[RMDB]
RNA sequence: GGGAACGACUCGAGUAGAGUCGAAAAUGCGGAUACGGAGAGAAACUUCAACCCGUGGGUUUCGUAAAGUCGUAUGUAACCAACUCCCAGCUCGACACGCUCCGCGUGCUCCUGGUGGGCAAAGACGACGUACUAAUGACUUCGGUCAUUAGUACGUAAAAGAAACAACAACAACAAC
Reactivity to DMS in 0.01 (KOAc 150mM, MgCl2 10mM, bicine 150mM(pH8.5), 24C), signal-to-noise 5, nucleotides 027 to 126: u020g030c050g000g000a070u000a050c070g000g000a110g010a260g000a040a100a060c050u000u000c070a080a120c090c030c020g020u000g010g000g010u000u000u000c010g020u000a110a070a090g010u000c030g010u000a070u000g000u010a100a130c060c060a070a120c170u010c020c000c010a060g020c030u000c140g000a080c020a020c010g000c050u020c150c150g000c020g030u000g000c080u000c060c020u000g010g010u010g000g000g020c300a040a050a140g000a080c140g000
Reactivity to 2A3 in 0.01 (KOAc 150mM, MgCl2 10mM, bicine 150mM(pH8.5), 24C), signal-to-noise 3, nucleotides 027 to 126: u100g000c000g030g000a020u050a140c030g000g030a020g010a010g030a120a130a090c020u110u040c030a070a090c020c000c020g020u080g010g060g000u040u050u020c030g000u120a020a060a180g030u040c010g000u040a030u160g090u050a070a080c030c000a030a070c020u000c030c000c000a080g060c030u020c010g000a010c000a010c030g040c040u170c130c200g020c030g000u020g010c040u020c000c020u050g060g110u060g000g000g030c060a120a040a020g080a040c060g010